[RMDB]
RNA sequence: GGGAACGACUCGAGUAGAGUCGAAAAGAUAUGGAACCGUGUAGCCAGCAAGGCCUGGAUCGGAAACGAUCCUGGCUGAUGACCUGGCGGUUCCUAAGUCAAACAACACUCGUUCGCGAGUGUUGAAGGGACUAGAUUUGUUCGCAAAUCUAGUCCCAAAAGAAACAACAACAACAAC
Reactivity to DMS in 0.01 (KOAc 150mM, MgCl2 10mM, bicine 150mM(pH8.5), 24C), signal-to-noise 1, nucleotides 027 to 126: g000a050u010a300u010g000g010a020a010c000c000g050u000g040u000a300g010c020c000a040g000c190a090a150g070g050c000c000u010g010g000a000u020c000g020g000a060a100a130c000g000a000u010c000c000u000g040g000c010u000g020a030u000g040a100c300c020u000g010g010c020g000g060u000u010c000c000u000a020a100g020u000c020a060a220a300c010a020a020c000a000c000u000c000g010u000u020c200g030c040g000a010g020u010g020u000u000g020a070a060
Reactivity to 2A3 in 0.01 (KOAc 150mM, MgCl2 10mM, bicine 150mM(pH8.5), 24C), signal-to-noise 1, nucleotides 027 to 126: g000a000u030a020u030g000g000a000a010c020c040g090u060g150u300a130g120c140c100a020g040c220a300a220g020g000c000c000u000g040g000a000u000c000g070g080a030a000a030c000g000a000u050c000c020u000g090g000c010u020g040a100u090g050a060c000c020u040g020g030c000g010g000u000u010c000c000u000a040a000g020u030c060a100a060a020c000a000a050c000a020c030u000c000g110u120u090c300g030c020g200a000g030u000g000u010u000g000a010a040